This 177-nucleotide RNA was probed chemically with DMS and 2A3. The DMS profile rests on 2,402 reads. Values cover nucleotides 27 to 126. High DMS reactivity at an A or C suggests that its Watson-Crick edge is free. Source: RMDB library TTRDEL, as collected in RNAgym. The RNA was probed in 150 mM KOAc, 10 mM MgCl2 and 150 mM bicine (pH 8.5) at 24 C.
RNA sequence: GGGAACGACUCGAGUAGAGUCGAAAAGAUAUGGAGCUAGAACUACCUCUGAGAGGACGUCGGAAACGACGUCUCCCCACCUCAACGUGAGGCUAGCUCCUAAGUCAAAGGGACCUUCGGGUCCCAAUCUGAGUUGAUAGUUCGCUAUCAACUCAGAAAAAGAAACAACAACAACAAC
Reactivity to DMS in 0.01 (KOAc 150mM, MgCl2 10mM, bicine 150mM(pH8.5), 24C), signal-to-noise 3, nucleotides 027 to 126: g010a000u000a300u010g000g010a010g020c000u000a010g010a070a040c040u030a300c010c010u000c030u000g010a070g000a060g030g010a020c000g000u010c000g010g000a040a050a140c000g020a000c000g020u000c010u000c020c000c020c190a300c150c060u000c120a050a080c250g010u010g000a000g000g000c020u010a010g000c000u000c000c000u000a000a080g000u010c020a050a100a160g010g000g010a010c000c000u010u010c140g020g000g010u000c000c000c000a000a000
Reactivity to 2A3 in 0.01 (KOAc 150mM, MgCl2 10mM, bicine 150mM(pH8.5), 24C), signal-to-noise 4, nucleotides 027 to 126: g000a010u020a030u130g020g010a000g000c010u000a000g020a090a140c140u180a100c230c010u010c100u160g140a080g000a010g070g050a020c000g000u000c010g000g010a020a030a040c020g000a000c000g000u000c000u030c010c000c010c000a160c020c060u110c040a120a190c210g270u230g090a000g000g020c000u000a000g010c000u000c010c000u010a030a000g020u000c010a070a180a050g020g000g010a000c020c000u060u080c280g160g010g000u010c000c040c000a000a010